RNA sequence: GGGAACGACUCGAGUAGAGUCGAAAAGCUGCUCAAACAGGGCAAGAGUCAAUUGCUCAAUUCGUUGCUCAACCUGCCCGCGGCGCGAGUAGGCGAUGACGAGGCCACCGUGGUGAUCACCGUCGUAGGGGAAUGACGGGUUCGCCCGUCAUUCCCCAAAAGAAACAACAACAACAAC
Reactivity to 2A3 in 0.01 (KOAc 150mM, MgCl2 10mM, bicine 150mM(pH8.5), 24C), signal-to-noise 1, nucleotides 027 to 126: g000c000u000g000c000u000c000a190a170a070c110a080g000g130g030c000a000a010g040a000g060u020c050a000a080u020u170g160c120u090c100a020a120u210u220c090g040u070u150g090c000u000c010a080a030c000c090u000g000c020c000c050g000c110g080g000c010g000c000g000a000g040u100a060g070g000c000g040a030u000g010a000c020g050a040g010g000c000c000a050c000c000g050u010g090g130u010g030a020u000c000a000c170c020g170u110c000g000u020a030